[RMDB]
RNA sequence: GGGAACGACUCGAGUAGAGUCGAAAAGGCAUAUUCGUAUGCCAAGCUCUCCUAAGUCUAGGAAACCUUGGAUUUAUAGCUGGAGAAUCGGAAACGAUUCGUUGAAAGCUAUUGUCAGGAUAACUAGAUAUGGAAACAGUCCGGUUUCGACCGGAAAUAUGUUUCUUAUAUUCGUAUAAGAAACAUAAAAAGAAACAACAACAACAAC
Reactivity to 2A3 in 0.01 (KOAc 150mM, MgCl2 10mM, bicine 150mM(pH8.5), 24C), signal-to-noise 7, nucleotides 027 to 156: g000g000c020a000u030a020u050u200c260g080u040a000u010g000c000c000a020a030g050c020u020c000u010c030c000u050a190a050g020u000c000u010a000g020g060a150a240a200c010c010u060u170g160g000a040u070u300u040a010u060a000g000c000u010g000g030a030g010a020a000u000c010g020g020a050a060a070c010g000a010u000u010c030g050u150u020g010a020a010a000g000c000u000a000u000u010g000u010c010a000g000g020a050u020a110a040c000u000a000g000a010u020a020u040g010g010a040a140a060c030a040g130u010c010c000g010g070u040u130u160c210g090a040c010c000g000g000a020a050a010
Reactivity to DMS in 0.01 (KOAc 150mM, MgCl2 10mM, bicine 150mM(pH8.5), 24C), signal-to-noise 5, nucleotides 027 to 156: g010g100c000a010u000a050u000u000c260g040u000a020u000g020c010c000a070a110g010c070u000c050u000c010c020u000a070a290g010u000c010u000a010g000g000a230a180a080c020c010u000u010g030g020a040u000u000u000a040u000a030g020c000u000g000g010a250g010a020a000u000c000g020g000a200a130a260c010g020a020u000u000c010g010u000u000g000a210a120a070g010c010u000a000u000u000g010u000c010a030g010g010a040u000a030a300c010u010a020g020a030u000a300u000g010g000a060a040a080c050a110g000u010c000c000g020g000u000u000u010c230g000a070c000c010g000g020a010a030a130
The data come from the RNA Mapping Database (RMDB), library RNAMAK. Structure probing data (2A3 and DMS) for a 207-nucleotide construct. For 2A3, 9,755 sequencing reads were counted. The DMS profile rests on 12,271 reads.